An RNA of 207 nucleotides, treated with DMS and 2A3 and read out base by base. For DMS, 3,452 sequencing reads were counted. The RNA was probed in 150 mM KOAc, 10 mM MgCl2 and 150 mM bicine (pH 8.5) at 24 C. For DMS the reverse transcriptase was MarathonRT. For 2A3 the reverse transcriptase was SuperScript II with manganese.

[RMDB]
RNA sequence: GGGAACGACUCGAGUAGAGUCGAAAAGACAUUUAACAACUUCCGGACGCACAUAUGCUCUCGUAUCCGACUUUGAAUACAGAUGAGAGAUGAUAUACAGAUGCAAUACGGUACCGCAAUUUCGUAGUUGAUAAUCAUCAUACGCGUAUCAGUACUCAAUAAUUCUCCACUUCGGUGGAGAAUUAUUAAAAGAAACAACAACAACAAC
Reactivity to DMS in 0.01 (KOAc 150mM, MgCl2 10mM, bicine 150mM(pH8.5), 24C), signal-to-noise 3, nucleotides 027 to 156: g000a150c050a090u000u000u010a120a220c080a110a110c040u010u000c010c030g000g040a100c170g010c040a080c100a160u000a080u000g050c030u000c000u000c020g030u000a010u020c020c010g020a140c140u000u000u050g010a100a090u010a090c080a140g050a100u000g010a030g000a090g000a080u010g010a090u000a060u000a060c040a120g010a200u000g010c040a070a100u010a050c050g000g010u000a060c090c030g000c100a100a070u000u000u000c050g060u010a130g020u020u010g000a080u000a060a020u010c030a190u000c030a140u010a110c100g040c050g000u010a080u000c020a050g010u000a090c070u020c060
Reactivity to 2A3 in 0.01 (KOAc 150mM, MgCl2 10mM, bicine 150mM(pH8.5), 24C), signal-to-noise 3, nucleotides 027 to 156: g030a000c050a060u140u120u180a150a110c110a040a050c060u130u060c050c040g030g050a060c080g000c080a000c020a050u110a070u140g000c000u020c000u000c040g030u030a030u040c020c030g070a060c120u070u100u160g070a080a030u100a100c060a050g090a090u120g000a100g000a000g000a020u070g100a020u020a010u080a110c060a000g090a050u020g000c000a010a000u050a110c020g010g000u030a050c000c110g040c110a100a140u000u100u110c020g030u030a060g050u020u050g090a080u060a120a000u100c030a000u010c000a000u030a140c030g000c010g040u050a030u070c030a080g080u040a030c010u030c040